[RMDB]
RNA sequence: GGGAACGACUCGAGUAGAGUCGAAAAACGGAUAGAUUCGUCUAUCCGUGCAUCUCAUAACAGACAGAGAUAGUCUGCUAAGAUCUCACUUAGAUAAAGAGAAGAGAGUCGAGUUCGCUCGACUCAAAUACCCGAUCCGAUUCGUCGGAUCGGGUAUAAAAGAAACAACAACAACAAC
Reactivity to DMS in 0.01 (KOAc 150mM, MgCl2 10mM, bicine 150mM(pH8.5), 24C), signal-to-noise 1, nucleotides 027 to 126: a020c010g000g000a020u000a010g000a050u000u010c200g010u000c000u000a000u010c000c000g010u010g000c130a130u000c000u010c010a150u010a100a150c010a000g000a000c000a050g010a130g000a200u030a030g040u000c010u000g020c090u010a040a050g000a060u000c020u000c030a150c080u000u010a040g010a160u010a080a110a070g010a050g040a070a270g020a190g000a050g010u000c000g010a040g010u000u010c200g010c000u000c000g010a010c000u010c000a000a040
Source information:
This 177-nucleotide RNA was probed chemically with DMS. Reactivities are given for positions 27 through 126. The reactions ran in a buffer of 150 mM KOAc, 10 mM MgCl2 and 150 mM bicine (pH 8.5), at 24 C. The DMS profile rests on 768 reads.